[RMDB]
This 177-nucleotide RNA was probed chemically with 2A3 and DMS. The 2A3 profile rests on 2,128 reads. It was measured as part of the RMDB library M2PK50.
RNA sequence: GGGAACGACUCGAGUAGAGUCGAAAACUAUGCAGAUUCGUCUGCAUAGAGACCCGAUGAAGCGGCACUUACACAGCUUCAUACACGUAAGAAGUGGAAUAAAGGGACGAGGGUUCGCCCUCGUCAAAGGAUCUCUGAAUUUCGAUUCAGAGAUCCUAAAAGAAACAACAACAACAAC
Reactivity to 2A3 in 0.01 (KOAc 150mM, MgCl2 10mM, bicine 150mM(pH8.5), 24C), signal-to-noise 3, nucleotides 027 to 126: c000u010a000u010g020c020a000g000a050u020u060c110g100u000c050u010g000c000a000u000a000g000a020g010a020c010c020c030g030a030u020g010a000a000g000c020g060g020c140a030c180u160u160a060c210a010c010a100g000c000u010u030c000a000u050a020c040a000c020g010u030a060a080g060a190a040g200u020g030g120a080a080u230a170a150a130g190g060g000a000c000g000a000g010g040g000u040u060c180g140c010c000c020u000c000g000u010c000a000a000
Reactivity to DMS in 0.01 (KOAc 150mM, MgCl2 10mM, bicine 150mM(pH8.5), 24C), signal-to-noise 2, nucleotides 027 to 126: c010u000a000u000g000c000a010g000a030u000u000c200g030u000c000u000g000c000a000u000a000g010a090g010a220c010c000c000g000a020u020g000a010a000g030c000g030g030c140a100c280u030u030a090c180a090c060a100g020c000u000u000c000a040u000a140c040a020c080g010u000a130a090g000a130a160g000u000g000g020a200a070u020a030a090a070g020g000g000a010c000g000a040g000g000g010u000u000c220g020c000c000c000u000c000g010u000c010a010a090